[RMDB]
RNA sequence: GGGAACGACUCGAGUAGAGUCGAAAAUGUGAAGGGAGAGACCGCUCCGAGAGUUGGGAGAAGAAAGAGAGCGAAUGUGUCCGGAGGGAACCCCCAAGCUUUCAACAGAGGAAGAGAGCAAGAUAGAACCCACCAUAGUUCGCUAUGGUGAAAAGAAACAACAACAACAAC
Reactivity to DMS in 0.01 (KOAc 150mM, MgCl2 10mM, bicine 150mM(pH8.5), 24C), signal-to-noise 9, nucleotides 027 to 129: u070g000u020g000a120a060g010g000g000a040g010a110g030a080c130c090g040c110u020c070c040g000a060g020a000g010u010u000g020g000g020a000g020a010a010g030a020a020a030g020a070g010a050g010c030g030a060a070u000g020u040g020u040c040c070g030g010a070g020g020g020a050a090c040c020c020c030c020a080a090g020c010u000u020u010c050a070a120c080a080g030a080g040g020a020a060g030a050g020a050g010c090a060a030g010a060u030a080g030a090a080c090c080
Reactivity to 2A3 in 0.01 (KOAc 150mM, MgCl2 10mM, bicine 150mM(pH8.5), 24C), signal-to-noise 9, nucleotides 027 to 129: u210g060u060g050a060a020g010g020g000a040g000a000g030a080c010c040g050c060u030c040c040g030a030g000a010g060u110u090g030g010g000a050g010a040a020g030a010a070a010g070a000g000a000g010c040g050a110a070u110g060u040g040u060c020c010g010g000a030g020g020g010a020a030c000c000c000c000c000a020a030g020c020u070u160u090c030a090a110c030a060g070a040g050g040a060a020g020a010g000a010g020c020a030a010g020a030u110a020g050a020a030c010c010